[RMDB]
Conditions: 150 mM KOAc, 10 mM MgCl2 and 150 mM bicine (pH 8.5), 24 C. The record gives the reactivity of an RNA of 177 nucleotides to 2A3 and DMS.
RNA sequence: GGGAACGACUCGAGUAGAGUCGAAAAAUCACGAGAUGACAGUCGAACUUGACACCGGCCCUGGUAAAAGUUCGUAUGGCCAGGACAGUGUGUCUUAUGCGUCACUCUGUAUAGUGGCCGAUACAGAGUAACUACUUAAUUUCGAUUAAGUAGUUACAAAAGAAACAACAACAACAAC
Reactivity to 2A3 in 0.01 (KOAc 150mM, MgCl2 10mM, bicine 150mM(pH8.5), 24C), signal-to-noise 7, nucleotides 027 to 126: a000u040c020a010c050g080a060g020a080u050g030a020c010a020g040u030c010g020a030a030c030u010u020g020a000c000a000c030c000g040g000c010c000c000u020g010g000u010a020a030a000a000g020u040u020c000g010u030a050u070g050g000c010c000a020g050g010a000c010a020g030u030g000u000g010u040c000u030u160a120u110g050c040g000u010c010a010c000u010c000u000g000u000a050u020a050g140u030g020g000c010c000g000a010u020a020c030a010g080a010
Reactivity to DMS in 0.01 (KOAc 150mM, MgCl2 10mM, bicine 150mM(pH8.5), 24C), signal-to-noise 9, nucleotides 027 to 126: a090u010c050a080c100g010a100g000a070u010g000a080c120a110g010u010c030g000a040a050c050u000u000g010a130c170a060c010c020g010g000c040c030c020u000g000g000u010a040a120a050a020g010u020u010c070g020u020a050u020g010g010c000c000a030g000g000a030c010a030g000u020g000u010g000u000c010u010u020a050u030g010c140g000u000c030a030c020u000c000u000g000u000a030u030a070g020u010g000g010c010c010g010a070u020a040c110a060g000a160